RNA sequence: GGGAACGACUCGAGUAGAGUCGAAAAUCAUUGGCUUCGCUCCGCGCUGCGUUGCCUAGGCUUCAGAUGCUUCGUACUGUUGCCAACGUUGCAAUUUCCAAACGCUAAUGCGAAAGUGUGCAAACAACGUGGGUUAAUAUUUCGAUAUUAACCCACGAAAAGAAACAACAACAACAAC
Reactivity to DMS in 0.01 (KOAc 150mM, MgCl2 10mM, bicine 150mM(pH8.5), 24C), signal-to-noise 4, nucleotides 027 to 126: u010c080a110u000u000g010g000c010u000u010c050g020c000u010c120c080g000c070g010c070u000g030c060g000u000u000g010c040c020u000a100g020g000c020u000u000c060a040g010a140u000g010c070u000u010c110g000u000a110c070u000g000u000u000g020c010c020a070a100c220g000u000u000g000c040a030a140u000u000u000c020c040a090a100a110c050g020c040u000a060a140u010g020c010g000a030a070a070g010u000g000u020g010c100a090a080a070c160a050a110
Reactivity to 2A3 in 0.01 (KOAc 150mM, MgCl2 10mM, bicine 150mM(pH8.5), 24C), signal-to-noise 3, nucleotides 027 to 126: u090c010a010u020u110g030g000c000u030u010c020g020c020u010c030c060g030c000g000c050u020g000c010g030u020u020g030c000c010u020a110g020g000c000u030u010c010a030g030a190u090g050c040u070u150c060g070u040a050c010u040g030u020u020g000c000c000a020a030c070g050u060u070g020c020a060a110u010u070u000c020c000a060a070a020c040g000c040u110a150a050u140g020c030g080a060a030a030g080u090g010u030g090c040a080a090a040c020a060a050
The record gives the reactivity of an RNA of 177 nucleotides to DMS and 2A3. The DMS profile rests on 3,491 reads. Conditions: 150 mM KOAc, 10 mM MgCl2 and 150 mM bicine (pH 8.5), 24 C.